[RMDB]
An RNA of 177 nucleotides, treated with 2A3 and DMS and read out base by base. The RNA was probed in 150 mM KOAc, 10 mM MgCl2 and 150 mM bicine (pH 8.5) at 24 C. For 2A3 the reverse transcriptase was SuperScript II with manganese. The 2A3 profile rests on 15,648 reads. It was measured as part of the RMDB library TTRDES.
RNA sequence: GGGAACGACUCGAGUAGAGUCGAAAAGAUAUGGACCCAACAUGGAGCUGUGGCCAAUCGGAAACGAUUGGAAUCAGCUAUGAAGUGUGGGUCCUAAGUCAAACCAGCCCACUUCGGUGGGCUGGAAGGAGUGUAUAUGGUUCGCCAUAUACACUCCAAAAGAAACAACAACAACAAC
Reactivity to 2A3 in 0.01 (KOAc 150mM, MgCl2 10mM, bicine 150mM(pH8.5), 24C), signal-to-noise 5, nucleotides 027 to 126: g010a010u040a010u090g000g000a000c010c000c010a030a120c010a050u030g020g040a030g000c010u010g030u170g230g140c030c010a010a010u010c010g000g010a040a020a030c000g000a010u010u000g000g050a010a050u170c010a000g050c000u170a300u040g020a010a030g010u010g000u010g030g000g000u020c000c010u000a010a010g000u000c020a010a060a150c000c000a000g000c010c000c000a000c010u060u060c200g160g000u010g000g030g000c000u010g000g010a010a050
Reactivity to DMS in 0.01 (KOAc 150mM, MgCl2 10mM, bicine 150mM(pH8.5), 24C), signal-to-noise 4, nucleotides 027 to 126: g020a020u000a300u010g020g000a020c010c000c000a040a060c000a030u000g010g000a020g030c010u000g030u020g010g010c010c000a010a000u000c000g040g010a100a080a130c000g020a010u000u000g000g000a070a080u000c010a010g040c000u000a240u030g000a150a210g000u000g030u000g010g020g000u000c000c000u010a010a080g000u010c020a120a140a190c000c000a020g010c000c000c000a000c000u000u010c210g020g010u000g000g000g030c000u010g000g000a010a040